[RMDB]
RNA sequence: GGGAACGACUCGAGUAGAGUCGAAAAUCAUGCUAUCACGAGGUAACUGGGUCAAGAUCAGUUACCUGUGAGCGAAAGUUCACAAUGUGUCAAUGAUCUUGACGUUGACGUAUUAGUGAUAGCAUGCCUACACCUAUCUAUUCGUAGAUAGGUGUAGAAAAGAAACAACAACAACAAC
Reactivity to 2A3 in 0.01 (KOAc 150mM, MgCl2 10mM, bicine 150mM(pH8.5), 24C), signal-to-noise 9, nucleotides 027 to 126: u130c000a000u000g000c000u000a000u000c000a000c010g030a030g030g000u020a030a020c010u020g020g020g110u120c100a070a020g040a200u030c000a010g030u000u000a000c000c000u000g000u000g000a000g000c000g040a100a020a000g000u000u000c000a000c000a020a020u050g050u020g000u030c010a000a020u020g020a120u040c040u080u100g080a030c040g200u010u020g010a020c020g010u020a010u010u040a020g000u000g000a000u000a000g000c000a000u000g000c000
Reactivity to DMS in 0.01 (KOAc 150mM, MgCl2 10mM, bicine 150mM(pH8.5), 24C), signal-to-noise 9, nucleotides 027 to 126: u030c000a000u000g000c000u000a000u000c000a010c000g000a090g000g010u000a010a030c010u000g000g000g010u010c190a080a100g010a080u000c000a030g000u000u000a010c000c020u000g010u000g000a010g010c000g010a120a090a140g010u000u000c000a010c000a020a010u000g010u010g010u000c070a020a030u000g000a090u000c090u000u000g010a080c020g010u000u000g000a070c090g010u000a020u000u000a130g010u000g000a010u000a000g010c000a000u000g000c270

This 177-nucleotide RNA was probed chemically with 2A3 and DMS.
The RNA was probed in 150 mM KOAc, 10 mM MgCl2 and 150 mM bicine (pH 8.5) at 24 C.
DMS adducts were read by reverse transcription with MarathonRT.
Source: RMDB library OK2TRN, as collected in RNAgym.